[RMDB]
RNA sequence: GGGAACGACUCGAGUAGAGUCGAAAAGUACAGGGUGCAUCUACUAAAACAUCUAUUCCUGGUAUUUUUGCUGCAGGAGAUGUGGUAGAUAGCGUUUAUAGGCAAGCAAUAUCUGCAGCAGGAAUGGGACCAUGCGGAUGUUCGCAUCCGCAUGGUCAAAAGAAACAACAACAACAAC
Reactivity to 2A3 in 0.01 (KOAc 150mM, MgCl2 10mM, bicine 150mM(pH8.5), 24C), signal-to-noise 2, nucleotides 027 to 126: g200u150a030c170a000g000g000g040u120g020c000a080u050c000u040a040c040u040a090a300a160a000c000a020u000c000u060a110u010u140c020c000u140g040g010u200a200u000u000u000u120u130g050c000u070g070c030a050g020g020a190g030a000u040g030u030g040g000u030a000g030a040u030a100g000c000g020u150u000u000a190u040a060g060g090c050a000a060g000c000a030a040u000a060u160c000u000g000c000a080g010c000a000g000g090a060a140u150g010g000